[RMDB]
RNA sequence: GGGAACGACUCGAGUAGAGUCGAAAAAAUCUGGGCGUAGAUCCGGCGACGCUAAUCGGCGAUCACCUCGACGAUCUCGCGCUGCUGACGACCUAUCGGACUCCCGAGAACCGGGCGUUCACCACGACCGGUCGAUAGUCUUCGGACUAUCGACCGGAAAAGAAACAACAACAACAAC
Reactivity to 2A3 in 0.01 (KOAc 150mM, MgCl2 10mM, bicine 150mM(pH8.5), 24C), signal-to-noise 5, nucleotides 027 to 126: a000a020u130c130u070g030g000g020c010g050u090a040g010a070u030c060c020g020g010c020g010a030c000g000c030u100a100a230u120c080g010g000c010g050a170u110c050a060c070c070u080c050g080a090c070g000a020u020c020u030c100g020c010g000c030u080g040c020u020g030a020c010g050a080c030c000u050a080u070c010g040g060a080c030u060c060c020c020g020a090g000a060a040c040c000g000g030g020c000g000u010u020c130a150c170c010a040c050g080a050
Reactivity to DMS in 0.01 (KOAc 150mM, MgCl2 10mM, bicine 150mM(pH8.5), 24C), signal-to-noise 1, nucleotides 027 to 126: a050a010u000c110u010g000g000g000c000g020u080a060g000a010u000c010c020g020g000c060g000a100c060g000c100u000a170a120u060c140g000g050c130g000a140u000c060a000c260c260u000c040g000a090c090g000a030u000c000u010c300g030c000g000c020u070g040c130u030g000a070c000g100a000c010c000u010a000u000c000g050g000a120c150u000c000c000c000g040a030g000a030a270c010c060g000g000g010c040g000u080u000c000a180c000c060a010c280g000a060
Structure probing data (2A3 and DMS) for a 177-nucleotide construct. Values are in units of 0.01, from 0 to 300, in steps of 10.